[RMDB]
RNA sequence: GGGAACGACUCGAGUAGAGUCGAAAAACACCAAAACUGAAAACGGAAGGUAAUCCUUCCACGACGAUACUUACUUUCCUUUGAUCGUCGUUACUACUGGCAUAGCCACAAAGGAGAACAAACAUGAGCGCGGACACUGACUUCGGUCAGUGUCCAAGCCAGCAACACAGUUCGCUGUGUUGCUGGCAAAAGAAACAACAACAACAAC
Reactivity to 2A3 in 0.01 (KOAc 150mM, MgCl2 10mM, bicine 150mM(pH8.5), 24C), signal-to-noise 2, nucleotides 027 to 156: a000c050a090c010c030a050a070a040a050c120u150g050a070a050a050a020c050g000g020a000a010g040g000u130a080a130u270c000c010u000u030c000c000a000c000g000a000c000g000a000u090a140c040u110u030a060c010u040u140u040c010c000u050u030u030g000a000u010c000g000u000c000g000u030u060a030c000u030a020c020u040g020g000c050a280u110a150g000c010c010a050c040a020a040a010g030g010a040g010a020a070c090a100a100a010c080a150u200g050a030g120c110g000c070g030g000a000c000a000c030u000g000a000c020u080u070c160g040g010u000c020a000g000u000g000u000c000c000a000a000